[RMDB]
RNA sequence: GGGAACGACUCGAGUAGAGUCGAAAAGAGAGAAAUACCGCGAGAAAACCCAGAAAGGACGGACCGGACGCGGAAGCAGGUGCGUCACCGGUCGCAAGAAAGAGCCUAACAAGACGCACAGAGAGAGCCUACCUAUGGCAUUCGUGCCAUAGGUAGGAAAAGAAACAACAACAACAAC
Reactivity to 2A3 in 0.01 (KOAc 150mM, MgCl2 10mM, bicine 150mM(pH8.5), 24C), signal-to-noise 2, nucleotides 027 to 126: g100a000g000a010g060a010a090a020u100a050c000c030g000c020g010a030g010a050a070a060a040c070c060c000a060g170a030a060a040g050g010a040c010g010g000a000c020c010g010g040a040c020g020c000g050g080a030a000g110c080a070g000g020u040g000c050g020u000c000a000c040c010g000g020u010c010g000c110a030a040g040a100a060a000g090a000g000c000c000u000a050a130c010a070a030g010a020c000g010c030a000c030a000g070a000g020a000g000a000g020
Reactivity to DMS in 0.01 (KOAc 150mM, MgCl2 10mM, bicine 150mM(pH8.5), 24C), signal-to-noise 2, nucleotides 027 to 126: g010a050g000a070g000a040a100a140u000a090c000c030g000c010g010a100g000a060a150a200a170c040c000c000a220g090a060a110a040g010g050a100c110g050g000a040c000c010g000g030a120c010g050c000g020g030a090a040g000c150a180g000g010u000g050c000g060u000c010a080c000c000g000g000u000c000g080c070a130a060g000a130a080a140g030a100g000c000c010u010a030a090c230a050a010g030a020c010g020c000a000c020a110g030a220g000a140g010a010g020
Structure probing data (2A3 and DMS) for a 177-nucleotide construct.
High DMS reactivity at an A or C suggests that its Watson-Crick edge is free.
For 2A3, 1,750 sequencing reads were counted.
The RNA was probed in 150 mM KOAc, 10 mM MgCl2 and 150 mM bicine (pH 8.5) at 24 C.
Values cover nucleotides 27 to 126.
For DMS the reverse transcriptase was MarathonRT.
The data come from the RNA Mapping Database (RMDB), library OK1LIB.